RNA sequence: GGGAACGACUCGAGUAGAGUCGAAAAAGCUUGCUGUGUAAGUCCAUUGGGAAAUCGACCAGCUCAACUGGUCGGCGUCCGGUGGAAACUACCACCAGGCUUGGGGCCGAGAGACUCAAACGGGUACCUCUGCAGGCAAUUUCGAUUGCCUGCAGAGAAAAGAAACAACAACAACAAC
Reactivity to DMS in 0.01 (KOAc 150mM, MgCl2 10mM, bicine 150mM(pH8.5), 24C), signal-to-noise 1, nucleotides 027 to 126: a000g040c000u030u000g040c250u010g000u020g000u000a000a000g000u000c000c000a000u030u000g060g000g000a000a050a060u000c000g000a000c000c000a000g020c160u080c300a290a290c000u000g000g000u000c000g000g010c300g000u010c000c020g040g000u030g000g010a040a050a060c010u030a000c010c010a000c220c020a010g020g000c000u000u000g000g000g000g020c000c000g050a020g010a220g000a030c040u000c130a030a180a060c160g010g000g040u000a010c060